The record gives the reactivity of an RNA of 177 nucleotides to 2A3 and DMS. The data come from the RNA Mapping Database (RMDB), library TTRDEL. 2A3 adducts were read by reverse transcription with SuperScript II with manganese. DMS adducts were read by reverse transcription with MarathonRT. The 2A3 profile rests on 38,831 reads.
RNA sequence: GGGAACGACUCGAGUAGAGUCGAAAAGAUAUGGAUACGUGGAGCUAUGUGGCAUCACUUCGGAAACGAAUAUGCCACCUAGCGUUGAAACGUAUCCUAAGUCAAAACCUCGGCUUCGGCCGAGGAACUAAUUACAGUACUUCGGUACUGUAAUUAGAAAAGAAACAACAACAACAAC
Reactivity to 2A3 in 0.01 (KOAc 150mM, MgCl2 10mM, bicine 150mM(pH8.5), 24C), signal-to-noise 6, nucleotides 027 to 126: g010a010u060a020u140g000g000a000u010a010c000g000u010g000g030a020g000c010u010a000u020g010u010g000g000c000a000u000c020a010c020u010u000c010g030g020a080a050a040c000g010a000a020u300a000u210g000c000c000a000c000c000u000a000g000c000g010u030u000g000a000a010a000c000g000u000a000u000c000c000u010a050a010g030u000c010a020a030a080a300c010c000u000c000g010g000c010u090u090c300g180g000c010c000g000a000g000g000a000a000
Reactivity to DMS in 0.01 (KOAc 150mM, MgCl2 10mM, bicine 150mM(pH8.5), 24C), signal-to-noise 8, nucleotides 027 to 126: g000a030u000a300u010g000g010a010u000a010c000g000u000g000g000a090g010c000u000a000u000g010u000g000g010c000a010u000c080a030c080u000u000c000g000g000a120a090a210c010g010a080a010u000a010u000g000c010c000a000c000c030u000a000g000c000g010u000u010g000a110a110a010c000g010u000a000u000c000c000u000a010a050g000u000c020a120a060a110a120c000c000u000c000g000g000c000u000u010c250g020g010c000c000g010a000g000g010a010a060